[RMDB]
RNA sequence: GGGAACGACUCGAGUAGAGUCGAAAACCGAGUUCCGGGGCCGUUCACUGGAUCCGAAGCCUCUAGAAGGAUAAUAUAGGCACUCCAUACCCUACUCCGACUCAAUACGUCCCCGUCGUACAGAAUGCAAGGGCAUCCCUGUUCGCAGGGAUGCCAAGAGCUUAUAUAAGUUCGCUUAUAUAAGCUCAAAAGAAACAACAACAACAAC
Reactivity to 2A3 in 0.01 (KOAc 150mM, MgCl2 10mM, bicine 150mM(pH8.5), 24C), signal-to-noise 1, nucleotides 027 to 156: c020c030g000a040g070u140u060c020c000g000g010g030g020c020c020g000u130u120c070a040c130u040g070g030a100u160c010c030g060a050a050g020c000c020u030c020u050a180g030a180a090g170g000a040u100a270a120u180a060u100a150g010g000c030a010c030u010c010c000a050u050a180c010c010c060u060a060c000u010c080c000g090a070c030u010c090a000a100u090a200c020g020u020c000c000c010c000g030u050c000g020u040a130c030a170g130a170a070u160g050c090a030a080g050g040g000c000a000u030c000c010c000u000g000u050u060c180g020c030a000g020g000g070a000u000g000c000c000a000a000